An RNA of 177 nucleotides, treated with 2A3 and DMS and read out base by base. Conditions: 150 mM KOAc, 10 mM MgCl2 and 150 mM bicine (pH 8.5), 24 C. 2A3 adducts were read by reverse transcription with SuperScript II with manganese. The data come from the RNA Mapping Database (RMDB), library OK2TRN. Reactivities are given for positions 27 through 126.
RNA sequence: GGGAACGACUCGAGUAGAGUCGAAAACAGAGCGUCGCCAGCAUCAUCAACGGGGCACUCGUGGCCGCGUUCAACUUUGUCGCCAGUGCCGGCCGUAACGCUUUUGCCGGCAUCACCGGGGCAAUCCACUGAAACAAGGGUUCGCCCUUGUUUCAGUAAAAGAAACAACAACAACAAC
Reactivity to 2A3 in 0.01 (KOAc 150mM, MgCl2 10mM, bicine 150mM(pH8.5), 24C), signal-to-noise 2, nucleotides 027 to 126: c060a020g040a000g060c040g000u000c000g030c020c000a000g010c000a050u050c000a010u030c020a050a040c040g010g030g040g000c040a020c020u150c070g110u230g030g000c050c010g160c050g070u060u060c070a090a050c050u080u080u080g060u050c080g060c120c010a000g000u020g010c000c000g000g000c000c020g110u130a130a030c050g050c050u090u070u130u130g000c030c000g000g000c000a010u040c010a010c040c050g010g010g000g020c000a000a010u020c010c020
Reactivity to DMS in 0.01 (KOAc 150mM, MgCl2 10mM, bicine 150mM(pH8.5), 24C), signal-to-noise 3, nucleotides 027 to 126: c100a140g000a070g020c030g030u000c080g010c050c020a070g010c050a010u010c060a090u010c120a040a070c030g010g000g000g010c010a050c030u020c200g030u010g010g000c020c020g000c010g010u010u000c150a060a070c110u000u000u000g010u000c050g020c000c040a130g010u000g020c020c000g010g010c010c230g010u010a090a040c160g020c140u000u010u000u000g030c020c000g000g010c050a020u010c080a050c180c050g000g010g000g000c050a020a050u010c080c060